[RMDB]
RNA sequence: GGGAACGACUCGAGUAGAGUCGAAAAUGGUGGCGGUUGACAGCAAUAUACUCGUCAUACUUCAAGUUGCAUGUGCUGCGUCUGCGUUCGCUCACCCCAGUCACUUACUUAUGUAAGCUCCUGGGGACAAGCUGGUAUGAUUCGUCAUACCAGCUUGAAAAGAAACAACAACAACAAC
Reactivity to 2A3 in 0.01 (KOAc 150mM, MgCl2 10mM, bicine 150mM(pH8.5), 24C), signal-to-noise 3, nucleotides 027 to 126: u170g050g020u030g040g000c030g000g090u070u110g070a060c020a030g070c030a070a020u140a010u010a110c040u060c080g120u080c080a060u080a150c020u080u120c050a110a060g020u010u060g020c050a060u110g060u050g050c020u000g010c020g050u010c010u000g010c020g040u080u090c030g010c000u040c030a090c000c000c000c000a010g010u030c010a000c020u040u050a000c010u150u300a110u300g020u010a000a020g020c050u030c020c000u000g010g000g010g000a000
Reactivity to DMS in 0.01 (KOAc 150mM, MgCl2 10mM, bicine 150mM(pH8.5), 24C), signal-to-noise 6, nucleotides 027 to 126: u000g020g030u000g010g010c040g000g020u010u000g010a090c050a040g000c080a070a070u000a100u000a080c040u000c070g010u010c070a110u010a090c110u000u010c100a050a090g010u000u000g010c070a070u000g020u000g000c030u010g000c060g020u000c020u010g000c060g010u000u000c060g010c080u000c130a190c010c000c000c000a000g000u000c190a120c000u000u010a010c000u010u000a140u010g000u000a000a010g000c070u000c250c000u000g020g000g000g010a130

The record gives the reactivity of an RNA of 177 nucleotides to 2A3 and DMS.
Values cover nucleotides 27 to 126.
For DMS the reverse transcriptase was MarathonRT.
The DMS profile rests on 7,308 reads.
It was measured as part of the RMDB library OK2TST.